[RMDB]
RNA sequence: GGGAACGACUCGAGUAGAGUCGAAAAAGCGUAGCGUACGCGCUACGCAUAAAAUGAUGAGUACGGGGCCACCUGAAUGGUGAUGAGGUUUCUCCCAAGGCUGAUUAGAGUGGCUACGGCCACUCAAUAAAGACUAGUUGUUCGCAACUAGUCUUUAAAAAGAAACAACAACAACAAC
Reactivity to DMS in 0.01 (KOAc 150mM, MgCl2 10mM, bicine 150mM(pH8.5), 24C), signal-to-noise 5, nucleotides 027 to 126: a090g000c010g010u000a000g010c000g040u000a100c230g030c020g020c000u000a000c000g000c000a010u040a020a080a110a090u010g010a080u020g010a060g000u010a050c120g000g000g000g000c060c040a030c030c020u000g010a060a080u030g000g010u010g000a110u010g000a120g000g000u000u000u000c040u000c000c000c010a100a100g000g000c040u000g000a090u020u020a110g010a000g010u000g000g000c000u000a060c180g010g010c010c000a000c000u000c000a020a040
Reactivity to 2A3 in 0.01 (KOAc 150mM, MgCl2 10mM, bicine 150mM(pH8.5), 24C), signal-to-noise 5, nucleotides 027 to 126: a000g010c000g000u010a010g000c000g000u020a000c200g000c000g000c060u000a000c000g010c010a000u080a010a050a010a060u210g070a050u060g020a010g030u050a020c020g000g010g000g010c010c010a040c020c040u080g120a110a130u200g030g030u040g030a120u110g010a030g040g050u020u040u020c060u030c010c010c010a020a050g100g000c030u040g020a080u020u130a080g000a010g000u000g000g000c000u000a040c080g030g000c010c000a000c000u000c000a000a000